[RMDB]
RNA sequence: GGGAACGACUCGAGUAGAGUCGAAAACCGUAGGCUGAAGGUGGCAGCACGUCCGUUGAAACGAGCUUCGAAAGAGGCUCGUGGAGGACGUGAACUACUGUGUUACAGCAGCCUAAACGGAAACUGGUGUAGCAGUGUUCGCACUGCUACACCAGAAGGACAGAAGAAUCUUCGGAUUCUUCUGUCCAAAAGAAACAACAACAACAAC
Reactivity to 2A3 in 0.01 (KOAc 150mM, MgCl2 10mM, bicine 150mM(pH8.5), 24C), signal-to-noise 1, nucleotides 027 to 156: c000c000g010u010a010g000g030c010u020g030a160a030g130g000u050g060g040c030a030g020c010a000c000g000u000c000c000g130u180u070g010a000a010a000c000g020a000g000c000u010u000c000g050a070a040a050g000a000g000g000c030u000c010g000u000g010g020a020g000g050a010c000g010u000g000a000a010c010u090a030c000u030g040u020g150u290u160a040c030a010g000c000a000g010c040c000u020a120a060a000c030g040g080a110a030a080c000u000g000g010u010g000u000a000g000c000a020g000u000g030u040u160c300g010c110a000c000u000g000c000u040a000c000a000c000c010a000g000a000a000